The record gives the reactivity of an RNA of 177 nucleotides to DMS.
[RMDB]
RNA sequence: GGGAACGACUCGAGUAGAGUCGAAAAAGGUGUUCCACCCCCCGAGAGGGGACGAGUGAGGCUUAUCCCGGGGAACUCGGCGAAUCGUCCCCACAUAGCAGCUCCCAGGACCCCCUUCCAAAAGUGACAUUAAGAACACGUUCGCGUGUUCUUAAUGAAAAGAAACAACAACAACAAC
Reactivity to DMS in 0.01 (KOAc 150mM, MgCl2 10mM, bicine 150mM(pH8.5), 24C), signal-to-noise 1, nucleotides 027 to 126: a000g030g000u010g020u000u020c030c010a270c000c050c000c000c020c050g000a180g000a150g020g000g020g000a000c070g010a060g020u010g030a140g010g000c080u010u010a080u010c030c000c030g060g000g010g010a120a070c040u010c040g000g020c140g030a040a080u000c020g040u000c000c000c000c000a080c160a050u000a090g000c030a030g010c000u000c010c010c010a080g000g020a270c010c000c000c010c020u000u000c000c000a010a070a070a130g020u000g010a250

It was measured as part of the RMDB library VIROID. For DMS the reverse transcriptase was MarathonRT.